Structure probing data (2A3 and DMS) for a 177-nucleotide construct.
[RMDB]
RNA sequence: GGGAACGACUCGAGUAGAGUCGAAAAUCUUGAAGGGCAUAAGAUGAUACCGUUGCCCUCCACGCGAGGGCAUGAAUUGAAACUGUAGAGUAAUGCUGGUUGACUUGGUACUACUAACCAGUUGCCCCAGUAGUGUGGAGUUCGCUCCACACUACUGAAAAGAAACAACAACAACAAC
Reactivity to 2A3 in 0.01 (KOAc 150mM, MgCl2 10mM, bicine 150mM(pH8.5), 24C), signal-to-noise 3, nucleotides 027 to 126: u000c010u010u060g060a120a100g000g010g020c020a010u070a110a010g030a030u090g020a040u060a110c010c010g050u010u040g000c010c000c020u000c010c000a280c180g110c210g010a010g000g000g030c030a000u020g050a030a100u140u100g050a030a070a030c030u040g020u070a020g020a030g160u030a020a060u120g030c020u010g030g050u070u170g070a130c060u050u070g020g050u060a050c020u010a000c010u010a030a020c030c010a020g030u040u090g010c020c000c000
Reactivity to DMS in 0.01 (KOAc 150mM, MgCl2 10mM, bicine 150mM(pH8.5), 24C), signal-to-noise 3, nucleotides 027 to 126: u000c010u010u000g000a120a140g010g000g010c010a130u010a050a050g000a030u000g000a120u010a210c030c000g010u010u000g010c000c000c000u000c000c030a070c300g020c160g010a020g050g010g000c000a000u000g000a060a080u000u010g000a140a060a100c040u000g010u010a060g000a060g010u000a050a060u000g020c010u000g010g020u000u000g010a080c110u010u000g010g000u000a040c090u000a040c020u010a060a110c200c000a020g010u000u000g000c010c010c010
The RNA was probed in 150 mM KOAc, 10 mM MgCl2 and 150 mM bicine (pH 8.5) at 24 C.